Source: RMDB library OK2TST, as collected in RNAgym. Structure probing data (2A3) for a 177-nucleotide construct. Values cover nucleotides 27 to 126. For 2A3, 513 sequencing reads were counted.
[RMDB]
RNA sequence: GGGAACGACUCGAGUAGAGUCGAAAAGCAUCACGACAUUCAAUAACACUUUCUUUAUUAAUGUCACAGAAUAAUGCAAUUUUAUCUUUUAAAUCUUGUGUCAUUUCAUAUUCAGUUCUUACAACGAGACUUGAGACACAUUCGUGUGUCUCAAGUCAAAAGAAACAACAACAACAAC
Reactivity to 2A3 in 0.01 (KOAc 150mM, MgCl2 10mM, bicine 150mM(pH8.5), 24C), signal-to-noise 1, nucleotides 027 to 126: g000c000a000u080c050a040c100g040a000c010a000u000u010c040a070a010u020a030a040c040a000c090u300u110u110c080u030u250u090a010u020u010a040a000u020g000u000c000a020c030a100g070a090a070u180a070a000u020g000c000a050a020u000u120u080u060a070u000c030u090u250u040u130a150a200a080u010c010u140u070g080u010g050u040c010a030u000u070u040c020a030u040a080u250u070c030a090g060u080u050c000u080u100a070c010a090a000c090g000a010